Chemical mapping of a 177-nucleotide RNA with DMS and 2A3. For 2A3 the reverse transcriptase was SuperScript II with manganese. Source: RMDB library TTRDEL, as collected in RNAgym. The reactions ran in a buffer of 150 mM KOAc, 10 mM MgCl2 and 150 mM bicine (pH 8.5), at 24 C. For DMS, 781 sequencing reads were counted. For 2A3, 2,132 sequencing reads were counted. DMS adducts were read by reverse transcription with MarathonRT.

RNA sequence: GGGAACGACUCGAGUAGAGUCGAAAAGAUAUGGACAAUGCGAGCUUGGAUUUAUGUGGAAAUUCGGAAACGAACACCACAUUGUCAGCUCCAUUGUCCUAAGUCAAAACCCAACUUCGGUUGGGAACACGUUAUGACCGUUCGCGGUCAUAACGUGAAAAGAAACAACAACAACAAC
Reactivity to DMS in 0.01 (KOAc 150mM, MgCl2 10mM, bicine 150mM(pH8.5), 24C), signal-to-noise 1, nucleotides 027 to 126: g000a070u000a300u000g010g000a000c000a010a020u000g020c210g000a010g000c000u000u030g000g070a030u000u040u000a000u000g020u000g080g000a050a090a300u030u000c000g000g000a050a190a050c000g000a000a050c220a300c000c000a020c000a000u000u000g010u000c040a000g000c000u000c000c030a000u000u000g000u000c010c010u000a010a050g010u010c040a030a150a160a230c000c020c000a000a000c000u020u000c110g010g000u000u000g000g000g000a020a050
Reactivity to 2A3 in 0.01 (KOAc 150mM, MgCl2 10mM, bicine 150mM(pH8.5), 24C), signal-to-noise 2, nucleotides 027 to 126: g000a010u090a060u220g000g000a030c000a010a000u030g030c140g080a000g020c020u140u200g100g000a090u280u300u120a010u050g000u000g000g000a160a140a140u030u030c020g020g060a040a030a030c010g000a020a020c050a020c040c000a000c000a000u000u050g000u060c000a000g000c000u000c000c000a000u000u000g000u000c000c000u000a010a010g000u000c000a030a010a090a100c020c010c000a000a000c020u040u050c300g150g020u000u030g000g010g010a000a000